[RMDB]
RNA sequence: GGGAACGACUCGAGUAGAGUCGAAAACAGUUAUGUGCGUCCGUCCCGAAGCUGCGCGCUCGGUCGAAGAGGACGACCAUCGCCGAUAGAGGACGACCGGUCUUCGGUCAAGGGAAUAAGAGUAAAACUUUUAAUUAGACUUCGGUCUAAUUAAAAGAAAAGAAACAACAACAACAAC
Reactivity to DMS in 0.01 (KOAc 150mM, MgCl2 10mM, bicine 150mM(pH8.5), 24C), signal-to-noise 5, nucleotides 027 to 126: c080a090g000u000u010a030u000g010u000g000c020g000u000c010c030g010u000c020c010c000g010a090a080g030c030u000g030c140g020c110g020c040u000c050g020g000u020c100g010a070a050g000a160g010g000a050c010g010a050c030c010a050u000c050g010c030c030g000a100u010a100g010a090g000g000a060c080g000a080c070c070g020g000u000c070u010u000c010g020g010u000c030a080a070g010g010g010a090a060u010a040a090g010a090g010u010a070a080a080a160
Reactivity to 2A3 in 0.01 (KOAc 150mM, MgCl2 10mM, bicine 150mM(pH8.5), 24C), signal-to-noise 4, nucleotides 027 to 126: c000a020g020u140u100a070u120g090u080g020c010g000u020c010c000g030u030c000c000c000g030a110a050g000c040u090g030c060g000c020g020c110u010c030g000g030u030c070g030a060a030g110a160g130g030a020c000g020a010c000c010a030u050c020g000c030c010g040a030u100a120g100a050g030g040a050c040g020a040c020c030g080g050u080c070u200u240c050g000g000u010c020a020a040g080g020g030a050a110u140a150a050g050a040g060u150a010a100a040a070
The record gives the reactivity of an RNA of 177 nucleotides to DMS and 2A3. The 2A3 profile rests on 4,646 reads. The RNA was probed in 150 mM KOAc, 10 mM MgCl2 and 150 mM bicine (pH 8.5) at 24 C. For 2A3 the reverse transcriptase was SuperScript II with manganese. DMS adducts were read by reverse transcription with MarathonRT.